[RMDB]
RNA sequence: GGGAACGACUCGAGUAGAGUCGAAAACUCGGCAAAGGGCGGCAGUCCUCAGUACUCUUACUCUUUCCUAUAAAGAGGAGACUGCUGGACUCGCCGCCCGAGCCCGAGCAUGGGCCCCAGUUCCGAAGAUCUAGUUAGACUUCGGUCUAACUAGAUCAAAAGAAACAACAACAACAAC
Reactivity to DMS in 0.01 (KOAc 150mM, MgCl2 10mM, bicine 150mM(pH8.5), 24C), signal-to-noise 2, nucleotides 027 to 126: c000u000c010g020g000c040a060a300a150g000g010g050c010g010g020c030a040g030u010c000c000u010c010a010g020u000a070c040u030c000u000u020a300c030u000c000u000u000u000c220c240u040a150u010a080a010a010g010a020g010g010a010g010a100c020u000g010c220u020g000g000a030c000u000c200g060c050c010g010c010c000c000g010a060g000c230c030c010g010a000g010c050a050u000g000g000g000c050c000c010c070a120g000u000u000c010c000g010a200a140